[RMDB]
RNA sequence: GGGAACGACUCGAGUAGAGUCGAAAAACGCCGCUACACUGCACCCGGUGGGCGCGCCCAGCAGCGGUAUCGGCAUCGUCGAAGGCUGGCGCGGCACUAUCGUGCACCGCGUCGAAAUUGACGUCGAGCCGACCUACUACUUCGGUAGUAGGUCGGCAAAAGAAACAACAACAACAAC
Reactivity to 2A3 in 0.01 (KOAc 150mM, MgCl2 10mM, bicine 150mM(pH8.5), 24C), signal-to-noise 2, nucleotides 027 to 126: a000c110g010c030c000g060c000u000a030c070a080c080u080g010c000a060c030c110c040g000g080u080g000g170g000c090g010c000g080c000c000c000a020g040c000a010g000c040g100g000u030a090u100c010g000g000c000a070u190c000g030u000c000g030a000a020g050g070c090u010g000g040c010g000c000g010g030c000a000c020u300a300u190c250g000u020g000c020a070c010c060g000c020g020u000c000g000a000a000a130u000u000g010a000c000g050u040c020g020a000